[RMDB]
Source: RMDB library OK3TST, as collected in RNAgym.
An RNA of 207 nucleotides, treated with DMS and 2A3 and read out base by base.
The reactions ran in a buffer of 150 mM KOAc, 10 mM MgCl2 and 150 mM bicine (pH 8.5), at 24 C.
DMS (dimethyl sulfate) methylates the pairing face of unpaired adenines and cytosines.
For DMS the reverse transcriptase was MarathonRT.
RNA sequence: GGGAACGACUCGAGUAGAGUCGAAAACGUGAGUGGGCACUUGCAUGGCCAGCUGGUUGCCCUCGAUUCGCCGCAGGAUCGUCGGCGUCAUGUUUCGUAGCAGACUGCGGAGGCGCACAUAGCCGCGAGUACUGUCGAUGUACUGGUGCAAGCCCAGCUCUGCAUAAAGGUUCGCCUUUAUGCAGAGAAAAGAAACAACAACAACAAC
Reactivity to DMS in 0.01 (KOAc 150mM, MgCl2 10mM, bicine 150mM(pH8.5), 24C), signal-to-noise 1, nucleotides 027 to 156: c090g010u080g010a090g010u040g040g040g010c000a120c020u010u010g000c160a120u010g020g000c020c020a080g010c020u000g010g000u000u010g050c000c000c020u020c010g000a090u000u000c020g020c030c200g010c240a270g030g010a020u000c050g000u010c040g040g000c010g040u020c060a030u000g000u020u000u010c040g030u000a120g010c010a090g000a060c100u000g000c040g000g000a280g020g030c050g000c070a090c070a160u020a210g000c010c020g060c050g000a070g020u000a070c040u000g030u000c090g010a100u000g000u000a060c000u000g000g010u000g020c000a050a070g020c010c000c000a050g060
Reactivity to 2A3 in 0.01 (KOAc 150mM, MgCl2 10mM, bicine 150mM(pH8.5), 24C), signal-to-noise 3, nucleotides 027 to 156: c070g100u120g050a070g030u060g010g000g000c040a030c120u040u090g000c050a070u050g110g000c000c030a000g000c020u050g000g000u110u250g020c020c000c010u000c020g010a040u040u030c000g030c160c070g030c100a090g020g070a060u050c030g080u000c020g000g010c020g040u050c030a030u110g030u080u090u050c040g020u030a030g040c030a030g030a100c030u060g020c070g060g040a070g050g030c090g040c050a030c020a160u130a040g020c020c000g000c030g020a030g010u050a250c020u010g180u210c040g010a010u040g030u150a050c010u000g040g030u030g000c030a100a050g000c000c000c000a010g000